Source information: The record gives the reactivity of an RNA of 177 nucleotides to DMS and 2A3. For 2A3 the reverse transcriptase was SuperScript II with manganese. It was measured as part of the RMDB library OK1LIB. The 2A3 profile rests on 20,956 reads.
[RMDB]
RNA sequence: GGGAACGACUCGAGUAGAGUCGAAAACAAGGUUCACCAUCAUCCCUGACGAUAGAAUGUUCGCGUCGGGCGAAAGAACGCCGGAGUAGCAUAACAACGGACUGAUGGAAUAGGAAACAAAACAAAAGCUACUGAGCGACUUCGGUCGUUCGGUAGCAAAAGAAACAACAACAACAAC
Reactivity to DMS in 0.01 (KOAc 150mM, MgCl2 10mM, bicine 150mM(pH8.5), 24C), signal-to-noise 9, nucleotides 027 to 126: c030a090a080g000g000u010u000c070a140c000c010a020u000c020a110u000c030c010c010u000g010a070c060g000a060u030a050g010a100a130u040g010u040u010c080g030c000g010u010c010g020g010g010c080g010a040a100a110g010a090a090c110g020c020c010g000g010a280g000u000a060g000c130a060u010a070a070c080a030a200c080g000g010a050c110u010g010a030u000g000g000a100a080u030a070g010g000a070a050a040c080a050a050a080a060c180a050a050a050a090
Reactivity to 2A3 in 0.01 (KOAc 150mM, MgCl2 10mM, bicine 150mM(pH8.5), 24C), signal-to-noise 7, nucleotides 027 to 126: c030a020a050g130g040u060u040c020a030c040c000a010u000c000a010u020c000c000c000u010g010a020c020g010a030u110a120g150a160a150u200g040u170u090c040g010c030g130u010c000g030g010g010c030g040a060a090a040g060a130a040c030g000c010c000g030g000a030g010u070a010g040c070a060u060a050a030c020a020a030c010g000g010a020c030u030g000a020u000g000g010a020a080u080a090g020g040a060a030a020c050a040a070a050a010c070a010a140a010a010